RNA sequence: GGGAACGACUCGAGUAGAGUCGAAAAAAUGCCGCCUCAGUUCCAAGCUCUUUCGUGGCACUGUAAACAGUCCUAUUGAGUUAGGGGCAGUCAACCACGUUGCGAAGCUAAAUUAUCUGGUCGAGAGCCCACAAAGACGCUUCGGCGUCUUUGUGGGAAAAGAAACAACAACAACAAC
Reactivity to 2A3 in 0.01 (KOAc 150mM, MgCl2 10mM, bicine 150mM(pH8.5), 24C), signal-to-noise 1, nucleotides 027 to 126: a060a000u160g010c000c000g070c000c010u010c010a040g030u020u050c000c060a010a000g060c000u060c010u010u010u010c040g000u000g000g010c000a000c000u000g090u170a040a040a040c000a030g280u280c000c000u080a070u080u150g090a200g260u000u110a000g000g010g000g000c000a000g000u010c000a010a010c060c020a000c010g030u010u100g050c030g220a090a020g030c000u010a100a050a030u110u100a000u100c090u030g000g030u040c040g000a000g000a000g160
Chemical mapping of a 177-nucleotide RNA with 2A3. Source: RMDB library RFM100, as collected in RNAgym. Values cover nucleotides 27 to 126. Conditions: 150 mM KOAc, 10 mM MgCl2 and 150 mM bicine (pH 8.5), 24 C. For 2A3 the reverse transcriptase was SuperScript II with manganese. 2A3 is a SHAPE reagent: it acylates the 2'-hydroxyl of flexible nucleotides of all four kinds.